[RMDB]
RNA sequence: GGGAACGACUCGAGUAGAGUCGAAAAAACAGGUGCUGUCAUUGCUAGUCCAACCUUUUCUUUGCCGGAAGAUUUGGGUGGCGUUCGAAAUUGGGAUUAUCGAUUUACAUGGAUUCGUGAUUCAGCUUUCACUAUAUAUGCUUUAGCACAGCUUGGAGACCAAAAUCGUGUUCGCACGAUUUUGGUCAAAAGAAACAACAACAACAAC
Reactivity to 2A3 in 0.01 (KOAc 150mM, MgCl2 10mM, bicine 150mM(pH8.5), 24C), signal-to-noise 1, nucleotides 027 to 156: a000a000c070a030g040g000u080g050c040u040g010u100c010a050u010u000g000c030u020a010g110u020c010c010a010a070c070c040u030u050u030u020c090u090u100u150g050c040c050g040g000a040a040g030a080u050u090u130g020g020g000u010g000g000c030g070u000u080c060g070a000a040a040u180u170g050g030g020a010u050u040a050u110c020g050a060u040u030u080a060c030a050u090g060g000a020u040u040c020g080u030g010a020u070u000c000a010g010c000u060u110u080c020a070c090u100a040u000a040u020a010u240g050c010u050u010u070a020g000c000a010c010a020g000c020u050u070g060g020a160